An RNA of 177 nucleotides, treated with 2A3 and DMS and read out base by base. For 2A3, 1,612 sequencing reads were counted. The DMS profile rests on 5,126 reads. DMS adducts were read by reverse transcription with MarathonRT. The reactions ran in a buffer of 150 mM KOAc, 10 mM MgCl2 and 150 mM bicine (pH 8.5), at 24 C.

RNA sequence: GGGAACGACUCGAGUAGAGUCGAAAAUGCCACUAGCAGUGCCCUUCCACCCUGCGAGGGUUAUUUGUCUUCUUAUGUUGUUCACUGAACUGACCCUACAGCAAUGAAAAAAACCAGAAGUUAGCUGCGAAUGCAAUUAGUUCGCUAAUUGCAUUCGAAAAGAAACAACAACAACAAC
Reactivity to 2A3 in 0.01 (KOAc 150mM, MgCl2 10mM, bicine 150mM(pH8.5), 24C), signal-to-noise 2, nucleotides 027 to 126: u050g010c000c000a020c100u060a000g010c040a010g020u020g080c010c000c000u020u050c000c010a040c010c000c000u010g030c040g040a100g000g010g000u060u050a080u060u070u070g060u040c050u090u000c000u070u160a200u200g080u110u070g020u050u050c030a050c080u080g060a100a030c050u030g020a060c000c020c030u030a030c000a000g040c030a020a040u220g050a000a090a000a020a100a020a030c040c040a030g050a080a020g100u060u070a030g030c050u070g020
Reactivity to DMS in 0.01 (KOAc 150mM, MgCl2 10mM, bicine 150mM(pH8.5), 24C), signal-to-noise 5, nucleotides 027 to 126: u010g020c040c020a080c090u010a110g010c030a050g020u010g010c070c050c030u010u010c040c040a130c060c040c010u010g010c080g000a070g000g000g010u000u010a050u000u000u010g000u000c040u000u000c040u010u000a090u010g010u000u010g010u010u000c040a100c070u000g010a060a070c050u000g010a070c020c020c020u000a120c050a050g020c080a080a090u010g010a000a010a040a090a050a080a130c090c100a080g000a080a090g000u000u000a050g030c050u000g010